[RMDB]
RNA sequence: GGGAACGACUCGAGUAGAGUCGAAAAAUGAAACAAGCCCUUGAAGGGCUCUUCCGCUGGGCGGACCUGAACUCUGACAGCACCCAUGCAAUGGCAGUCGAGAAGGUCAAGAACAUGGACAGCAUGACUCAAGCAUUGAGUUCGCUCAAUGCUUGAGAAAAGAAACAACAACAACAAC
Reactivity to DMS in 0.01 (KOAc 150mM, MgCl2 10mM, bicine 150mM(pH8.5), 24C), signal-to-noise 2, nucleotides 027 to 126: a140u000g020a090a070a160c100a160a030g010c000c010c000u010u020g040a210a080g000g010g010c000u000c030u000u000c020c110g070c140u020g000g020g000c090g000g000a060c020c010u010g020a130a100c090u000c030u000g060a030c020a050g010c080a210c150c010c050a090u030g020c180a060a080u010g000g060c060a060g010u030c030g010a080g010a100a040g010g010u000c040a030a140g000a030a090c130a050u010g000g000a130c060a090g020c060a100u010g000a140
Reactivity to 2A3 in 0.01 (KOAc 150mM, MgCl2 10mM, bicine 150mM(pH8.5), 24C), signal-to-noise 1, nucleotides 027 to 126: a000u050g010a000a020a050c030a040a060g040c040c010c060u020u150g300a190a110g000g010g090c030u000c020u080u000c000c050g000c040u060g000g030g000c070g030g010a010c000c020u060g050a130a080c000u010c080u160g050a000c000a030g000c000a110c010c050c050a050u230g090c010a050a260u050g090g000c000a000g020u040c000g020a010g060a100a010g010g020u090c010a000a050g120a010a060c050a100u110g010g090a040c020a100g000c060a080u100g020a060